Annotation
Structure probing data (DMS and 2A3) for a 177-nucleotide construct. Source: RMDB library OK2TST, as collected in RNAgym. For DMS the reverse transcriptase was MarathonRT. The RNA was probed in 150 mM KOAc, 10 mM MgCl2 and 150 mM bicine (pH 8.5) at 24 C.
RNA sequence: GGGAACGACUCGAGUAGAGUCGAAAAUAGCGUCUGCAGCCAGGGUUUGUGGACCUUGGCGCGAAAAGCCUGAUAACCCGCGUCAUCGGUGCACAGCGUGUCGCCAUGCAUAAUCAACACCCGGCGAAGCCCGAACUUUAUUCGUAAAGUUCGGGCUAAAAGAAACAACAACAACAAC
Reactivity to DMS in 0.01 (KOAc 150mM, MgCl2 10mM, bicine 150mM(pH8.5), 24C), signal-to-noise 3, nucleotides 027 to 126: u010a100g000c020g000u000c050u010g010c050a130g010c010c020a040g040g000g010u000u000u010g040u010g020g010a050c010c020u010u000g000g010c010g020c020g000a020a090a140a170g010c020c050u000g000a080u000a110a150c100c060c020g010c050g010u000c030a050u000c100g010g000u000g000c040a060c030a050g000c070g020u000g000u000c070g000c030c030a050u000g020c040a090u010a100a060u010c080a090a080c100a100c030c020c030g000g000c090g040a110
Reactivity to 2A3 in 0.01 (KOAc 150mM, MgCl2 10mM, bicine 150mM(pH8.5), 24C), signal-to-noise 1, nucleotides 027 to 126: u060a010g040c020g050u080c080u100g010c050a030g000c040c010a000g030g000g000u010u090u130g150u250g090g020a000c000c000u000u000g010g000c000g000c000g010a020a000a000a010g030c000c030u050g060a070u070a130a070c040c030c020g000c010g050u030c000a120u060c060g040g040u070g040c030a020c000a060g040c040g050u010g050u110c030g000c040c010a030u100g020c010a060u080a150a030u100c010a040a020c020a030c030c000c000g090g000c010g060a020

2A3 adducts were read by reverse transcription with SuperScript II with manganese.